[RMDB]
Chemical mapping of a 177-nucleotide RNA with 2A3 and DMS. The 2A3 profile rests on 1,885 reads. The reactions ran in a buffer of 150 mM KOAc, 10 mM MgCl2 and 150 mM bicine (pH 8.5), at 24 C. As a SHAPE reagent, 2A3 marks flexible, mostly unpaired nucleotides at the ribose 2'-OH. The data come from the RNA Mapping Database (RMDB), library OK2TST.
RNA sequence: GGGAACGACUCGAGUAGAGUCGAAAAGAACCAACUCCUCAUCCGCGUCGGAGGCAUAGGCCGCAAACUCUGAGAGAAUUAUCUCCCCUACUUCAAUAUCGGCGAGCUCAAGGAGCAGCUCAGACUAGCUUUUAAAUCGAUUCGUCGAUUUAAAAGCAAAAGAAACAACAACAACAAC
Reactivity to 2A3 in 0.01 (KOAc 150mM, MgCl2 10mM, bicine 150mM(pH8.5), 24C), signal-to-noise 2, nucleotides 027 to 126: g030a040a040c040c000a020a020c010u040c020c000u010c000a100u050c050c020g060c020g100u070c020g040g020a000g040g000c020a130u150a100g050g050c030c000g020c060a050a100a040c030u000c060u080g040a040g010a000g010a110a140u280u130a130u220c040u060c040c000c020c000u020a050c010u090u160c070a090a140u060a040u210c030g040g000c010g030a010g000c010u010c050a030a090g080g000a040g010c010a010g000c010u010c010a010g070a100c010u090a020
Reactivity to DMS in 0.01 (KOAc 150mM, MgCl2 10mM, bicine 150mM(pH8.5), 24C), signal-to-noise 3, nucleotides 027 to 126: g020a230a240c040c030a090a080c090u000c010c030u000c050a100u020c030c030g020c060g010u000c040g010g000a130g020g010c060a070u000a090g020g000c010c040g000c070a080a060a120c060u000c040u000g000a110g010a050g020a080a110u000u020a120u000c020u000c000c010c000c030u000a060c050u000u000c070a060a080u010a090u000c070g000g010c030g000a090g010c050u000c040a030a140g010g000a080g010c110a070g000c020u000c080a100g000a110c070u000a090

For DMS the reverse transcriptase was MarathonRT.